[RMDB]
RNA sequence: GGGAACGACUCGAGUAGAGUCGAAAAUUUUUUGGUGCCUUCGUGGGGUUUUUGGGGCGGUGUUUACCGACUCUUCUCUGCCUCCGCCCUGCUCAGCCAGGGCUUUGAGCCUCUUCGGUUUUCCGGCUAAUGUCCACCUAUUCGUAGGUGGACAUUAAAAAGAAACAACAACAACAAC
Reactivity to DMS in 0.01 (KOAc 150mM, MgCl2 10mM, bicine 150mM(pH8.5), 24C), signal-to-noise 1, nucleotides 027 to 126: u000u000u010u000u020u000g010g010u000g020c030c020u010u010c070g030u000g040g000g000g010u000u000u000u000u020g010g000g010g020c010g020g020u000g020u010u010u010a090c090c020g020a070c030u000c010u000u010c030u000c020u010g000c040c010u010c050c280g000c010c000c010u000g010c030u020c180a090g030c160c010a040g000g000g000c020u000u010u000g010a090g010c040c040u000c060u000u000c090g000g010u000u000u000u010c020c000g010g030c180
An RNA of 177 nucleotides, treated with DMS and read out base by base. The reactions ran in a buffer of 150 mM KOAc, 10 mM MgCl2 and 150 mM bicine (pH 8.5), at 24 C. The DMS profile rests on 1,942 reads. Values cover nucleotides 27 to 126.